Chemical mapping of a 177-nucleotide RNA with DMS.
For DMS the reverse transcriptase was MarathonRT.
For DMS, 736 sequencing reads were counted.
RNA sequence: GGGAACGACUCGAGUAGAGUCGAAAAGAUAUGGAGGUUACUCACGAGUCGUUGUUGCAAGGCCAAGUGUCGGAAACGACAUGACGGCUGAUGACCAACUGACGACUCGUGAGUAACCUCCUAAGUCCAUCGCUCUGAUCUUCGGAUCAGAGCGAUGAAAAGAAACAACAACAACAAC
Reactivity to DMS in 0.01 (KOAc 150mM, MgCl2 10mM, bicine 150mM(pH8.5), 24C), signal-to-noise 1, nucleotides 027 to 126: g010a110u010a290u030g000g010a020g000g000u010u000a000c000u020c000a020c020g000a000g020u030c000g040u000u000g000u010u000g000c010a110a190g030g050c000c000a080a300g000u000g030u000c000g010g010a070a120a300c000g010a000c000a020u000g000a250c300g000g020c020u010g000a040u000g000a160c300c020a000a000c000u010g030a030c010g000a000c000u000c000g020u000g000a000g020u000a000a000c000c020u000c000c000u010a000a070g000u000c030